[RMDB]
Record summary: Structure probing data (2A3 and DMS) for a 177-nucleotide construct. Values cover nucleotides 27 to 126.
RNA sequence: GGGAACGACUCGAGUAGAGUCGAAAAACCUGGGUUCCCUGGCAGCGCUGCAACGGAAUUCAGGGCACGGAGUCGGUGCCAGAUCGUGCGGCUUCGGCGCCAGUUCGUGCGAGAGCUUCGCUCGCGACAACAGUUGACAGUUCGCUGUCAACUGUUGAAAAGAAACAACAACAACAAC
Reactivity to 2A3 in 0.01 (KOAc 150mM, MgCl2 10mM, bicine 150mM(pH8.5), 24C), signal-to-noise 2, nucleotides 027 to 126: a000c010c000u010g010g020g000u020u050c010c010c000u030g140g000c060a080g060c100g120c280u020g020c050a050a050c030g050g010a000a010u050u010c000a060g020g050g000c030a010c010g100g040a040g090u140c120g060g050u020g000c000c010a050g020a130u100c040g040u100g120c050g070g000c000u050u050c030g000g000c000g050c010c010a010g060u080u090c040g010u060g050c010g020a020g000a000g010c000u120u060c060g010c040u050c030g020c010g010a000
Reactivity to DMS in 0.01 (KOAc 150mM, MgCl2 10mM, bicine 150mM(pH8.5), 24C), signal-to-noise 2, nucleotides 027 to 126: a110c030c000u000g010g010g000u000u000c010c020c060u010g010g020c030a050g010c170g030c120u010g020c000a050a070c300g000g000a050a050u000u010c020a060g000g020g020c050a010c010g010g000a040g000u000c080g000g020u000g000c000c020a090g010a070u010c110g020u010g020c070g020g000c080u010u000c070g010g000c040g020c010c040a100g010u000u010c020g040u020g010c000g000a030g000a080g020c120u010u000c100g000c030u000c020g020c070g000a230
For DMS, 2,190 sequencing reads were counted. 2A3 is a SHAPE reagent: it acylates the 2'-hydroxyl of flexible nucleotides of all four kinds. For 2A3 the reverse transcriptase was SuperScript II with manganese.